An RNA of 177 nucleotides, treated with DMS and 2A3 and read out base by base.
Source: RMDB library M2PK50, as collected in RNAgym.
The 2A3 profile rests on 5,611 reads.
Reactivities are given for positions 27 through 126.
The RNA was probed in 150 mM KOAc, 10 mM MgCl2 and 150 mM bicine (pH 8.5) at 24 C.
RNA sequence: GGGAACGACUCGAGUAGAGUCGAAAAUCCAUAAGGUUCGCCUUAUGGAAAAAGCGGCCAGCUGCAGGCCGCAAAAAUAAAUGGAGCACAAGACGAAAGUCAAAACAGUACUCUUCGGAGUACUGAAUCAUUGCUUAUUGUUCGCAAUAAGCAAUGAAAAAGAAACAACAACAACAAC
Reactivity to DMS in 0.01 (KOAc 150mM, MgCl2 10mM, bicine 150mM(pH8.5), 24C), signal-to-noise 2, nucleotides 027 to 126: u000c000c000a000u000a040a000g000g030u000u010c300g050c000c000u000u000a000u000g010g000a010a030a040a090a190g010c000g010g000c010c010a140g030c000u000g000c020a090g010g040c000c000g030c000a000a010a000a050a020u010a010a010a070u010g000g010a040g040c030a220c290a120a080g000a030c000g010a140a110a140g010u000c010a070a070a090a240c010a020g020u000a000c000u000c000u000u010c150g020g000a010g010u000a000c010u000g000a060a090
Reactivity to 2A3 in 0.01 (KOAc 150mM, MgCl2 10mM, bicine 150mM(pH8.5), 24C), signal-to-noise 3, nucleotides 027 to 126: u000c000c000a000u020a000a000g000g030u010u100c160g100c020c000u000u000a010u000g000g050a050a060a000a000a030g000c010g000g000c000c000a020g000c010u060g030c030a080g030g000c000c000g000c010a030a050a000a000a030u020a000a010a020u030g040g010a010g010c020a010c060a120a040g020a000c010g040a120a020a020g010u030c010a000a050a080a010c000a000g000u000a010c010u000c000u050u110c240g120g000a010g000u000a000c000u000g000a000a020